Chemical mapping of a 207-nucleotide RNA with DMS. The data come from the RNA Mapping Database (RMDB), library OK3TST. Conditions: 150 mM KOAc, 10 mM MgCl2 and 150 mM bicine (pH 8.5), 24 C.
RNA sequence: GGGAACGACUCGAGUAGAGUCGAAAAAAGUAAUUUAGAUUACAUGGAUUUGAGAAGCCCAUGUUGACACGUAAUUGCCAACAGAUGGGCUUUCAAAUGUAAUGAAGUGAAAAUGGUCAGUACCCCAUGUGUUGGAUUUUGCAAUUUUCCAAAGUAACAUUACGGAGGGAUUCGUCCCUCCGUAAUGAAAAGAAACAACAACAACAAC
Reactivity to DMS in 0.01 (KOAc 150mM, MgCl2 10mM, bicine 150mM(pH8.5), 24C), signal-to-noise 2, nucleotides 027 to 156: a080a080g010u000a060a040u010u000u000a120g030a160u010u000a070c000a110u010g020g000a140u020u000u000g020a100g000a030a030g000c000c010c010a130u000g030u000u000g020a020c010a030c180g030u000a110a110u000u000g020c000c010a010a000c000a060g010a140u010g050g030g000c020u000u000u000c010a020a120a040u010g020u000a040a050u000g020a080a100g020u010g000a060a010a060a090u020g000g010u000c030a130g000u000a150c030c080c010c050a100u000g010u000g010u010u010g000g000a230u000u000u000u000g000c030a050a160u000u000u000u000c030c020a090a080a150g020u020a080a220